[RMDB]
RNA sequence: GGGAACGACUCGAGUAGAGUCGAAAAAUAAUAGAUUGUAGUGGCUAUGCUUGUGGGAUAGAGUGAUUUUUGCCAUGAUCUGAAGAGGGAGGUUUAUUGUGUCCUCCUCCUAUAUGAAAUGGCUGUACGAAAGCGAUUAAUUCGUUAAUCGCUUUCGAAAAGAAACAACAACAACAAC
Reactivity to DMS in 0.01 (KOAc 150mM, MgCl2 10mM, bicine 150mM(pH8.5), 24C), signal-to-noise 5, nucleotides 027 to 126: a090u020a080a080u030a060g010a090u010u010g010u010a040g020u010g010g020c060u000a040u010g010c060u000u010g030u010g000g000g000a050u010a040g010a070g020u020g010a080u010u000u000u020u010g000c000c000a010u000g000a140u010c020u000g010a210a090g000a090g020g010g000a010g000g010u010u010u010a110u040u030g010u020g010u010c010c000u000c000c000u000c030c000u010a100u020a130u010g010a030a230a010u000g000g000c010u000g010u010a150
Reactivity to 2A3 in 0.01 (KOAc 150mM, MgCl2 10mM, bicine 150mM(pH8.5), 24C), signal-to-noise 6, nucleotides 027 to 126: a000u250a010a070u110a060g070a060u040u090g050u030a050g020u010g050g000c030u050a040u080g010c030u030u050g030u090g080g030g040a040u050a080g050a020g060u060g120a160u010u040u100u130u100g000c000c000a000u030g060a170u020c010u010g030a050a020g020a070g030g060g010a000g020g040u050u120u120a190u130u190g120u060g050u060c000c000u000c010c000u030c000c000u100a100u020a010u250g020a010a020a040u010g020g000c010u020g060u050a010
Description:
Chemical mapping of a 177-nucleotide RNA with DMS and 2A3. The data come from the RNA Mapping Database (RMDB), libraries RFM100 and RFMREP. Conditions: 150 mM KOAc, 10 mM MgCl2 and 150 mM bicine (pH 8.5), 24 C. DMS adducts were read by reverse transcription with MarathonRT.